This 177-nucleotide RNA was probed chemically with DMS. The RNA was probed in 150 mM KOAc, 10 mM MgCl2 and 150 mM bicine (pH 8.5) at 24 C. It was measured as part of the RMDB library TTRINS.

RNA sequence: GGGAACGACUCGAGUAGAGUCGAAAAGAUAUGGAUUGUGUGAGGCGAUGAAAGUUACUGUCCACGGAUCCGAUCGGAAACGAUCGGAGUCCGUGGACAGUAACUGGAGCCUCCACAAUCCUAAGUCCUAAGUACUAGGGUUCGCCCUAGUACUUAGAAAAGAAACAACAACAACAAC
Reactivity to DMS in 0.01 (KOAc 150mM, MgCl2 10mM, bicine 150mM(pH8.5), 24C), signal-to-noise 2, nucleotides 027 to 126: g000a130u020a300u000g010g010a020u010u000g010u000g010u010g020a020g010g030c000g020a100u030g010a100a180a040g000u000u000a010c000u000g020u000c000c010a000c030g000g010a300u000c000c020g030a010u010c020g010g000a130a110a270c010g030a030u000c010g000g000a040g000u000c000c020g090u000g000g000a010c000a000g000u000a010a000c000u000g020g000a060g010c010c000u000c000c000a000c000a000a000u000c000c000u000a010a050g010u000c040